[RMDB]
RNA sequence: GGGAACGACUCGAGUAGAGUCGAAAAGCCCGCAGAGCCUACUCCCUGCACCUGCGGGUGCGAGGGGCUGACCAAGGGUGGGAAGUUCCUGCCUGGGCAUGACAGCAAGUACCUCAACCAGCUAGUAUGCCAUAGCGAUAUUCGUAUCGCUAUGGCAAAAAGAAACAACAACAACAAC
Reactivity to DMS in 0.01 (KOAc 150mM, MgCl2 10mM, bicine 150mM(pH8.5), 24C), signal-to-noise 1, nucleotides 027 to 126: g020c000c000c000g000c130a050g000a150g010c050c010u000a170c050u000c000c040c040u030g020c010a070c060c000u010g030c110g020g030g040u000g000c050g010a010g020g000g000g000c040u010g000a060c030c030a160a120g000g000g010u000g010g000g000a170a280g010u000u000c000c000u000g000c040c030u000g000g000g030c010a060u000g000a130c060a060g000c030a090a060g000u000a130c020c010u000c040a090a170c040c050a120g010c000u000a070g030u000a070